[RMDB]
RNA sequence: GGGAACGACUCGAGUAGAGUCGAAAACAAAACUGCGCCGCAGUAACGAUAUCCUUCGCCAGGCUUCCGCUUAUUUUGCGAAGGCGGAGUUCGACCGCCUCUGGAAAAAAUGAUGCCACUGCUGGAUAAGCUGCGUGAGCAGUACGGGGUCGGACCGGUAUGCAGCGAACUGCAUAUUGCCCCGUCAACGUAUUACCAUUGUCAGCAACAGCGACAUCAUCCGGAUAAACGCAGUGCCCGUGCGCAGCACGACGACUGGCUGAAGAACAACACUUUUCGAAGUGUUGAAAAGAAACAACAACAACAAC
Reactivity to DMS in 0.01 (KOAc 150mM, MgCl2 10mM, bicine 150mM(pH8.5), 24C), signal-to-noise 3, nucleotides 027 to 266: c060a090a100a110a060c030u000g000c010g020c120c080g020c020a030g010u000a040a060c060g000a120u010a060u020c050c020u010u000c020g000c030c050a090g030g010c030u010u000c100c050g000c060u000u000a050u000u010u030u000g010c010g010a080a030g000g000c000g000g010a040g000u010u000c040g000a070c000c000g000c020c010u010c040u000g010g000a000a000a030a070a110a030u000g010a020u010g000c000c010a060c080u010g000c020u000g010g010a070u000a010a080g000c020u000g010c020g010u000g000a110g010c010a020g000u000a000c010g000g010g000g010u000c000g000g000a020c090c020g010g010u000a000u010g000c010a010g020c160g010a090a110c010u000g000c010a020u010a000u000u010g000c110c040c020c020g000u000c120a060a040c060g000u000a050u010u000a110c090c050a050u000u000g000u010c010a030g020c040a060a080c070a070g010c040g010a060c060a030u000c020a040u010c080c040g000g000a120u000a030a090a090c050g000c040a060g010u020g000c050c070c090g030u000g010c040g010c110a090g020c020a040c080g000a070c100g000a070c050u000g000g020c030u010g000a050a060g000a100a240
Reactivity to 2A3 in 0.01 (KOAc 150mM, MgCl2 10mM, bicine 150mM(pH8.5), 24C), signal-to-noise 3, nucleotides 027 to 266: c010a000a070a020a030c020u040g030c130g140c120c110g030c040a050g020u120a040a020c030g030a040u090a070u300c000c010u020u020c020g000c000c000a030g020g040c060u200u070c040c000g070c040u170u130a110u180u210u270u100g050c050g060a040a020g000g010c000g010g000a010g010u020u010c060g010a020c000c000g000c020c010u020c010u060g010g040a040a050a020a000a020a070u050g030a020u030g060c060c030a120c120u150g010c020u010g030g050a160u070a180a050g010c000u000g000c000g010u040g040a040g000c070a010g000u010a010c000g000g000g010g000u000c000g020g000a010c000c000g000g010u000a000u000g000c010a000g020c040g170a200a140c000u000g010c000a000u000a010u000u000g010c000c000c040c020g010u000c000a010a010c010g030u050a090u130u190a080c030c040a050u080u170g180u270c010a030g020c000a050a140c020a140g020c000g040a050c000a020u010c000a010u010c020c040g000g030a020u130a100a110a010c020g000c020a020g010u030g070c030c030c020g010u080g000c160g020c040a200g020c010a010c030g090a030c040g040a040c020u000g030g000c060u110g030a020a010g030a010a000